[RMDB]
RNA sequence: GGGAACGACUCGAGUAGAGUCGAAAAAAUCGUUCGCGAUUGGUUCUGCGUACUACCAUGGAGACCCACGGUCCCAUCAGUGGUCUCCCAAAUAGGAGACCACGACGACGGGAUUGGGUCGUUGAAAUGGUAUCGCUUCCUCAGCUUUCGAGCUGAAACACGUAAAAAAGUUCGCUUUUUUACGUGUAAAAGAAACAACAACAACAAC
Reactivity to 2A3 in 0.01 (KOAc 150mM, MgCl2 10mM, bicine 150mM(pH8.5), 24C), signal-to-noise 5, nucleotides 027 to 156: a000a000u040c040g010u090u060c280g000c010g100a020u020u040g080g020u240u120c090u110g000c000g020u070a120c030u010a000c030c010a010u010g040g000a020g000a010c000c000c050a080c200g090g040u000c010c010c000a040u060c020a020g000u010g000g000u000c000u010c000c000c010a120a240a100u290a050g000g000a010g000a000c000c020a000c030g050a050c050g010a010c030g010g000g010a010u010u050g010g000g010u010c010g000u010u020g000a020a010a000u010g000g000u010a030u120c000g000c000u020u020c000c000u010c000a010g010c010u090u070u170c260g110a000g000c000u010g010a070a030
Reactivity to DMS in 0.01 (KOAc 150mM, MgCl2 10mM, bicine 150mM(pH8.5), 24C), signal-to-noise 4, nucleotides 027 to 156: a040a020u000c010g030u000u000c130g040c070g020a090u000u000g020g010u010u000c040u000g020c040g040u010a120c110u010a030c000c000a040u020g010g020a300g010a030c000c000c010a070c240g020g010u000c000c010c000a030u000c010a140g020u000g000g010u000c000u000c000c000c000a050a110a190u000a060g020g020a040g020a020c020c010a000c010g010a020c140g020a020c020g020g000g010a060u010u000g000g010g020u000c000g030u010u000g010a250a170a050u000g010g000u000a040u000c030g010c030u000u000c030c030u000c010a020g020c000u000u000u000c230g010a010g030c000u010g000a050a210

The data come from the RNA Mapping Database (RMDB), library RNAMAK. The record gives the reactivity of an RNA of 207 nucleotides to 2A3 and DMS. The RNA was probed in 150 mM KOAc, 10 mM MgCl2 and 150 mM bicine (pH 8.5) at 24 C.